[RMDB]
RNA sequence: GGGAACGACUCGAGUAGAGUCGAAAAUCGGGCGUAGAGUCUAUACUAUGGUCGUAUUCUACUAGGAGUAUGAAGAAGGGCGUAUAGAUAUUACGCAGCAGUCAGUUAACGCCCUUCUCUGACUGCAGAUAGUAUGGGCAUUCGUGUCUAUACUAUCAAAAGAAACAACAACAACAAC
Reactivity to 2A3 in 0.01 (KOAc 150mM, MgCl2 10mM, bicine 150mM(pH8.5), 24C), signal-to-noise 9, nucleotides 027 to 126: u140c030g040g060g000c010g000u020a020g020a060g150u010c030u030a050u010a050c030u040a080u220g180g040u050c010g030u030a030u020u000c010u030a210c030u070a090g070g110a030g060u040a040u170g060a030a030g080a050a060g080g070g020c030g010u010a020u010a040g030a010u040a110u080u090a030c020g000c020a010g000c000a000g000u000c000a000g000u030u070a070a030c050g050c010c000c000u050u020c030u000c000u010g000a000c000u000g000c000a010
Reactivity to DMS in 0.01 (KOAc 150mM, MgCl2 10mM, bicine 150mM(pH8.5), 24C), signal-to-noise 9, nucleotides 027 to 126: u030c100g000g010g000c010g010u000a020g010a200g010u020c060u020a040u010a030c030u010a100u030g010g000u010c010g020u010a040u010u000c010u000a090c170u030a090g010g010a060g010u000a020u020g010a060a050g010a090a070g010g000g010c060g010u010a100u010a050g000a080u010a110u030u010a020c040g010c060a100g010c000a010g010u000c000a090g000u010u000a080a070c110g010c010c010c010u000u000c030u010c020u000g000a010c000u000g010c010a180
Chemical mapping of a 177-nucleotide RNA with 2A3 and DMS. The reactions ran in a buffer of 150 mM KOAc, 10 mM MgCl2 and 150 mM bicine (pH 8.5), at 24 C. The data come from the RNA Mapping Database (RMDB), library OK1LIB.